[RMDB]
RNA sequence: GGGAACGACUCGAGUAGAGUCGAAAAGAUAUGGAUUAGGACAUGAGGGCACAUCGGAAACGAUGUGUCCUCAACAGCCUACGGUCCUAAGUCGUGAGAACUCAUGAGCUUCGGCUCAUGAGUUCAAUCUAUUGAUCCUGUUCGCAGGAUCAAUAGAAAAAGAAACAACAACAACAAC
Reactivity to DMS in 0.01 (KOAc 150mM, MgCl2 10mM, bicine 150mM(pH8.5), 24C), signal-to-noise 8, nucleotides 027 to 126: g000a110u010a190u010g010g010a060u000u000a010g000g010a030c030a250u000g010a010g010g010g000c000a010c000a010u000c000g000g000a130a070a170c000g010a010u000g020u000g000u000c000c000u000c000a000a020c180a130g000c030c020u010a060c300g020g010u000c000c000u000a040a050g010u000c020g020u010g010a240g000a010a000c010u010c000a000u000g000a010g010c000u000u010c240g030g000c010u000c000a000u000g000a010g000u000u000c000a040a060
Reactivity to 2A3 in 0.01 (KOAc 150mM, MgCl2 10mM, bicine 150mM(pH8.5), 24C), signal-to-noise 3, nucleotides 027 to 126: g060a030u220a080u180g050g000a020u040u050a030g010g000a030c140a210u160g010a020g000g030g000c030a000c000a000u010c030g050g070a150a080a030c010g000a000u020g000u010g010u000c000c000u010c000a010a000c000a000g020c010c010u020a080c110g070g000u000c000c000u030a070a050g070u040c040g070u120g200a250g000a020a000c000u000c000a010u010g000a010g000c000u050u160c300g050g000c000u010c000a000u000g000a010g000u010u000c000a010a000
Annotation:
This 177-nucleotide RNA was probed chemically with DMS and 2A3. The data come from the RNA Mapping Database (RMDB), library TTRDEL. The RNA was probed in 150 mM KOAc, 10 mM MgCl2 and 150 mM bicine (pH 8.5) at 24 C. Reactivities are given for positions 27 through 126.